Structure probing data (DMS) for a 177-nucleotide construct. Values are in units of 0.01, from 0 to 300, in steps of 10. DMS adducts were read by reverse transcription with MarathonRT. The RNA was probed in 150 mM KOAc, 10 mM MgCl2 and 150 mM bicine (pH 8.5) at 24 C.
[RMDB]
RNA sequence: GGGAACGACUCGAGUAGAGUCGAAAAGUUUGUUAUGGCAGUAAAUCCGGAUGCCCAUGCUGAAUAUCAGCGACGGCACACGCCAAUCUGGCCAGAGCUGGAAAGCGUGCUGAAAGCGCAUGGCGCAAGUGCUAGUGCAGUUCGCUGCACUAGCACUAAAAGAAACAACAACAACAAC
Reactivity to DMS in 0.01 (KOAc 150mM, MgCl2 10mM, bicine 150mM(pH8.5), 24C), signal-to-noise 1, nucleotides 027 to 126: g000u000u000u040g000u010u000a090u000g030g000c040a090g020u000a030a050a100u000c070c050g000g020a170u000g000c020c010c070a070u010g010c010u000g000a070a180u030a120u010c010a000g000c070g000a210c120g010g030c070a100c120a030c070g010c030c100a110a230u010c030u020g000g000c050c140a100g010a180g030c010u000g000g010a050a190a090g000c030g000u000g000c000u000g010a080a090a100g010c050g000c040a060u000g000g010c110g070c050a080